[RMDB]
RNA sequence: GGGAACGACUCGAGUAGAGUCGAAAAUCACCAUUCGUGGUGAGUAGAAGGGGUCUAUUGGUGGGACAUGUCCUACCACUGAAGCCUCCACGGUGGAGGACAACAGCCGUAACAUCCAAUAGACGGAGGCACCCGUUAACACUUUUUCGAAAGUGAACUGAUUUUGAAUAUUCGUAUUCAAAAUCAGAAAAGAAACAACAACAACAAC
Reactivity to DMS in 0.01 (KOAc 150mM, MgCl2 10mM, bicine 150mM(pH8.5), 24C), signal-to-noise 2, nucleotides 027 to 156: u000c000a030c050c010a020u000u010c300g000u010g000g040u010g000a060g020u000a110g030a110a130g000g000g010g050u010c010u000a010u010u010g010g070u010g010g050g030a080c080a160u010g010u000c000c000u000a120c010c010a030c000u010g000a150a120g040c020c000u000c020c010a300c100g000g020u010g030g020a110g000g030a030c010a050a210c110a170g030c090c060g000u010a150a120c000a150u000c010c030a030a080u000a050g020a010c010g000g020a050g050g020c010a100c010c000c050g020u010u000a130a230c020a020c000u010u000u000u000u000c220g020a040a030a020g020u000g010a090a300
Reactivity to 2A3 in 0.01 (KOAc 150mM, MgCl2 10mM, bicine 150mM(pH8.5), 24C), signal-to-noise 5, nucleotides 027 to 156: u020c000a010c000c000a000u050u120c300g100u040g010g020u000g010a020g020u140a050g070a170a080g140g090g020g000u000c010u000a010u000u000g040g020u090g040g100g060a070c090a190u090g010u000c010c000u090a300c000c030a000c000u010g000a070a000g000c010c000u000c010c000a020c010g000g000u000g000g010a010g010g010a010c000a110a030c040a090g210c100c080g080u140a060a060c010a040u050c010c000a000a010u000a000g000a000c000g000g000a000g000g000c010a020c000c010c000g040u040u130a150a020c000a000c010u020u010u020u140u170c230g110a110a020a010g000u040g060a120a080
An RNA of 207 nucleotides, treated with DMS and 2A3 and read out base by base. For 2A3, 3,467 sequencing reads were counted. DMS adducts were read by reverse transcription with MarathonRT. As a SHAPE reagent, 2A3 marks flexible, mostly unpaired nucleotides at the ribose 2'-OH.